[RMDB]
RNA sequence: GGGAACGACUCGAGUAGAGUCGAAAAUGCUAUGCCAAAGUGUCUGACAUAAUCAAACAUUUGCGCAUUCUUUGACCAAGAAUAGUCAGCAAAUUGUAUUUUCAAUCAAUGCAGACCAUUUGUUUCAGGUAGACAUAAUCUUCGGAUUAUGUCUACCAAAAGAAACAACAACAACAAC
Reactivity to DMS in 0.01 (KOAc 150mM, MgCl2 10mM, bicine 150mM(pH8.5), 24C), signal-to-noise 2, nucleotides 027 to 126: u000g030c120u000a050u000g060c080c060a060a070a040g010u000g000u000c040u010g010a030c120a140u000a200a130u000c070a030a080a010c020a030u000u000u000g010c210g010c010a000u000u000c000u000u000u000g040a180c130c060a100a070g010a040a070u000a050g000u010c030a080g010c000a010a060a030u000u000g010u000a110u010u000u000u010c070a040a070u000c070a020a040u010g010c020a010g010a040c010c080a120u010u000u010g000u030u000u000c020a100
Reactivity to 2A3 in 0.01 (KOAc 150mM, MgCl2 10mM, bicine 150mM(pH8.5), 24C), signal-to-noise 2, nucleotides 027 to 126: u070g000c040u050a040u110g020c020c000a100a040a060g170u120g020u060c020u000g020a110c010a110u150a090a100u160c050a040a060a030c000a020u010u000u020g030c040g010c000a010u000u000c020u040u040u110g030a030c000c020a010a010g030a010a000u100a080g110u190c080a020g000c020a020a070a090u060u110g070u040a150u070u070u050u120c000a040a040u070c030a040a020u020g000c000a000g000a000c000c000a030u020u020u000g000u000u000u030c020a000